[RMDB]
RNA sequence: GGGAACGACUCGAGUAGAGUCGAAAAUAUGAAACUGAGCCCAGAUCCAGCCAAUCGUUCACCUCCUCAUAACAAGUCUAACUGGCUCGGGGAAGCUGAAAGGGCUGCACUAAAAUAACAUAGAUGACCUAAUAAUCUAGUUCGCUAGAUUAUUAGGAAAAGAAACAACAACAACAAC
Reactivity to DMS in 0.01 (KOAc 150mM, MgCl2 10mM, bicine 150mM(pH8.5), 24C), signal-to-noise 4, nucleotides 027 to 126: u000a090u000g000a110a120a080c130u000g000a090g000c020c000c010a090g010a150u010c120c000a020g000c000c090a150a100u020c080g000u000u000c020a070c030c010u000c010c010u000c030a100u020a070a080c240a110a030g010u000c030u010a110a150c200u010g000g000c000u000c110g030g020g000g010a040a060g000c130u000g000a030a150a090g020g000g020c020u010g000c150a040c150u010a030a050a070a080u000a060a120c070a050u000a080g010a100u000g010a220
Reactivity to 2A3 in 0.01 (KOAc 150mM, MgCl2 10mM, bicine 150mM(pH8.5), 24C), signal-to-noise 3, nucleotides 027 to 126: u200a070u040g060a070a030a040c060u050g030a030g020c000c000c000a020g020a100u010c040c030a000g030c030c020a050a130u110c060g080u020u030c030a120c040c000u040c010c010u030c000a050u070a120a040c050a070a020g010u000c010u040a050a040c050u090g000g000c020u010c040g010g000g000g000a010a020g000c040u010g010a050a010a030g040g010g000c010u050g020c010a020c030u090a070a050a080a180u140a100a030c020a050u090a050g130a100u080g040a050